[RMDB]
RNA sequence: GGGAACGACUCGAGUAGAGUCGAAAAGAUAUGGAGAGCGUUCAACAGCGUGGUGUCGGAAACGACACACACGACAUGAACCCUCCUAAGUCAAAGUCGUUACAUCACUUCGGUGAUGUAACGACAACAUACUUCUAGACUUCGGUCUAGAAGUAUGAAAAGAAACAACAACAACAAC
Reactivity to DMS in 0.01 (KOAc 150mM, MgCl2 10mM, bicine 150mM(pH8.5), 24C), signal-to-noise 9, nucleotides 027 to 126: g010a030u000a300u010g010g010a020g010a070g020c200g020u000u000c000a020a120c280a130g000c010g020u000g000g010u000g010u000c000g000g000a070a060a130c000g000a010c000a000c000a060c000a000c000g010a070c120a190u000g000a010a010c000c010c000u000c000c000u000a010a090g000u000c030a090a110a120g000u000c000g010u000u000a010c010a000u000c000a000c000u000u010c190g020g010u010g000a000u000g000u000a000a000c000g010a000c000a020a100
Reactivity to 2A3 in 0.01 (KOAc 150mM, MgCl2 10mM, bicine 150mM(pH8.5), 24C), signal-to-noise 8, nucleotides 027 to 126: g020a010u050a030u080g010g000a010g010a030g040c210g020u000u010c040a120a120c090a200g110c010g000u010g000g000u010g010u010c010g010g010a030a050a040c010g020a000c000a000c060a000c000a000c010g160a100c030a060u040g000a000a000c000c010c000u000c000c000u010a110a020g030u020c050a120a040a060g000u000c000g000u000u000a000c000a010u000c000a000c010u060u130c300g130g000u000g000a000u000g000u000a000a000c000g000a000c000a000a000
This 177-nucleotide RNA was probed chemically with DMS and 2A3. Reactivities are given for positions 27 through 126. Conditions: 150 mM KOAc, 10 mM MgCl2 and 150 mM bicine (pH 8.5), 24 C. The DMS profile rests on 22,789 reads. For 2A3 the reverse transcriptase was SuperScript II with manganese. Reactivities are rounded to 0.1 and cut off at 0 and 3. DMS adducts were read by reverse transcription with MarathonRT.